[RMDB]
RNA sequence: GGGAACGACUCGAGUAGAGUCGAAAACUCGCCCACCAUAUAGACUUUGUCGCAGGAAUGAUCUAUAUGUGUGAUCUGGCCGCAAUGCAUGAAUUGUGCGGCGCGAUGGUCCUGCUCGCAAGGGCGACUCCAGGUCACCAUUCGUGGUGACCUGGAGAAAAGAAACAACAACAACAAC
Reactivity to DMS in 0.01 (KOAc 150mM, MgCl2 10mM, bicine 150mM(pH8.5), 24C), signal-to-noise 1, nucleotides 027 to 126: c060u010c030g000c050c020c000a120c300c010a000u000a000u000a010g000a040c050u020u020u000g040u010c230g020c110a100g000g000a050a000u000g020a090u000c000u000a020u000a000u000g020u050g010u000g000a050u000c080u010g010g000c000c020g040c000a070a270u010g000c080a080u000g000a090a090u020u020g000u000g000c000g010g000c300g030c070g000a060u000g000g000u000c000c070u010g000c100u000c000g020c140a160a120g000g020g000c010g000a040
Reactivity to 2A3 in 0.01 (KOAc 150mM, MgCl2 10mM, bicine 150mM(pH8.5), 24C), signal-to-noise 1, nucleotides 027 to 126: c030u000c010g000c030c030c000a030c000c010a020u000a000u000a000g000a020c050u010u080u300g070u150c130g000c130a050g030g130a060a020u110g040a180u000c000u030a010u010a010u010g070u000g020u040g090a050u050c060u100g060g000c030c000g030c000a040a020u110g040c020a010u070g100a300a180u250u300g030u020g010c000g000g000c040g030c020g030a020u060g000g050u040c000c010u000g000c000u010c010g060c010a040a100g000g000g020c000g040a040